[RMDB]
Structure probing data (DMS and 2A3) for a 177-nucleotide construct.

RNA sequence: GGGAACGACUCGAGUAGAGUCGAAAAUAGGCGGCGAUAGCGCGGUUAGACAGCAGAGCAGACAUUGCAGCAUAUUUAUCCGUUAGCCAAGGUAUCAGAAAGUCUAAAAUAGCUUGUCCCGUGUAAGACCGCCGUAGGUAUUCGUACCUACGGCGGUAAAAGAAACAACAACAACAAC
Reactivity to DMS in 0.01 (KOAc 150mM, MgCl2 10mM, bicine 150mM(pH8.5), 24C), signal-to-noise 1, nucleotides 027 to 126: u000a150g000g000c030g000g010c030g000a080u030a080g000c080g030c000g060g020u040u000a010g000a030c180a100g000c030a060g060a100g030c040a050g000a200c160a110u000u000g000c060a110g000c000a080u070a230u000u000u030a000u050c010c030g000u040u030a140g000c010c020a100a040g000g010u000a110u070c120a070g010a100a040a150g000u010c000u000a000a020a000a100u000a020g030c030u000u020g000u000c000c000c000g000u000g010u030a050a120g080
Reactivity to 2A3 in 0.01 (KOAc 150mM, MgCl2 10mM, bicine 150mM(pH8.5), 24C), signal-to-noise 2, nucleotides 027 to 126: u180a080g030g000c000g020g060c000g010a020u060a140g010c000g000c020g000g000u000u010a000g090a010c000a000g010c060a000g060a000g170c050a000g140a300c030a070u030u270g050c020a000g000c000a020u020a170u120u090u110a000u000c010c010g030u000u290a000g000c000c000a050a110g050g010u090a040u300c030a030g190a170a120a030g040u030c010u060a010a010a010a010u110a000g030c000u070u110g000u150c010c000c000g000u000g000u160a160a090g120

The 2A3 profile rests on 711 reads.
High DMS reactivity at an A or C suggests that its Watson-Crick edge is free.